[RMDB]
RNA sequence: GGGAACGACUCGAGUAGAGUCGAAAACGUCGCCAUGAACCUGGACGAAGCCGAAGCCGCCGUGCGCGACAUGCUCGCCGGCAAUGCCUUCGGCGACGCCGGCUCGCGCGUGGUGAUCGAGGAGUUAACUAAUUAUAAUCUUCGGAUUAUAAUUAGUAAAAGAAACAACAACAACAAC
Reactivity to DMS in 0.01 (KOAc 150mM, MgCl2 10mM, bicine 150mM(pH8.5), 24C), signal-to-noise 9, nucleotides 027 to 126: c100g010u000c030g020c020c020a070u010g010a090a090c080c040u000g010g010a070c030g010a090a260g020c010c010g000a110a110g010c090c080g010c010c010g010u000g010c030g010c030g000a050c210a060u010g010c150u010c110g010c020c000g000g000c070a060a090u010g010c150c050u010u010c150g020g020c000g010a050c170g000c020c050g000g010c060u010c020g000c090g020c030g010u000g000g020u000g000a050u000c040g000a180g010g010a120g010u010u000a090
Reactivity to 2A3 in 0.01 (KOAc 150mM, MgCl2 10mM, bicine 150mM(pH8.5), 24C), signal-to-noise 6, nucleotides 027 to 126: c010g030u020c010g000c040c020a060u120g060a070a100c020c040u070g040g050a100c020g050a050a010g030c010c000g020a020a010g030c040c020g000c000c010g040u050g010c030g010c000g030a040c030a090u190g060c050u100c090g000c010c010g000g000c050a020a060u200g030c020c020u190u180c170g010g000c000g000a000c010g020c010c010g040g020c090u060c020g030c000g010c010g010u020g010g000u010g010a040u090c020g010a040g060g020a040g050u100u110a040

Annotation: Chemical mapping of a 177-nucleotide RNA with DMS and 2A3. Values are in units of 0.01, from 0 to 300, in steps of 10. Conditions: 150 mM KOAc, 10 mM MgCl2 and 150 mM bicine (pH 8.5), 24 C. 2A3 adducts were read by reverse transcription with SuperScript II with manganese. The DMS profile rests on 16,358 reads. The data come from the RNA Mapping Database (RMDB), library OK2TST.